Overview:
Source: RMDB library OK1LIB, as collected in RNAgym. Chemical mapping of a 177-nucleotide RNA with 2A3 and DMS. The reactions ran in a buffer of 150 mM KOAc, 10 mM MgCl2 and 150 mM bicine (pH 8.5), at 24 C. For 2A3, 6,347 sequencing reads were counted. Reactivities are given for positions 27 through 126. For DMS the reverse transcriptase was MarathonRT.
[RMDB]
RNA sequence: GGGAACGACUCGAGUAGAGUCGAAAAGCUAAUAUUAGACGGUCAAAGGAUAGUAUUAUAACUAGAGAAGUUGCCUCGGAUGGUAAAUACGCUAAAACAUCUUAUGAAGUAAUAAAUCAGAAUGAUAAUGAUUACAACUAUUCGUAGUUGUAAUCAUAAAAGAAACAACAACAACAAC
Reactivity to 2A3 in 0.01 (KOAc 150mM, MgCl2 10mM, bicine 150mM(pH8.5), 24C), signal-to-noise 7, nucleotides 027 to 126: g010c010u030a050a020u010a090u130u100a040g040a050c050g030g020u080c070a090a050a010g070g010a060u040a020g050u010a010u130u100a080u090a090a060c030u060a020g000a000g030a250a060g070u080u040g030c000c020u030c020g050g010a050u040g010g030u050a030a020a020u140a090c070g020c100u080a060a050a010a020c010a010u010c000u030u100a100u150g030a070a020g030u080a050a080u060a180a160a010u060c030a030g130a210a040u110g070a060u070a110
Reactivity to DMS in 0.01 (KOAc 150mM, MgCl2 10mM, bicine 150mM(pH8.5), 24C), signal-to-noise 7, nucleotides 027 to 126: g000c110u000a040a040u020a040u020u010a030g010a090c030g000g000u020c160a050a080a150g000g000a110u010a010g000u000a020u020u020a060u030a080a080c030u010a070g010a090g000a070a160g010u000u010g000c040c010u000c040g020g000a050u000g010g010u020a040a060a060u020a070c160g010c110u010a040a050a090a080c080a040u000c020u010u000a110u020g000a020a060g010u000a040a070u040a030a070a060u000c030a050g010a060a090u010g010a070u010a060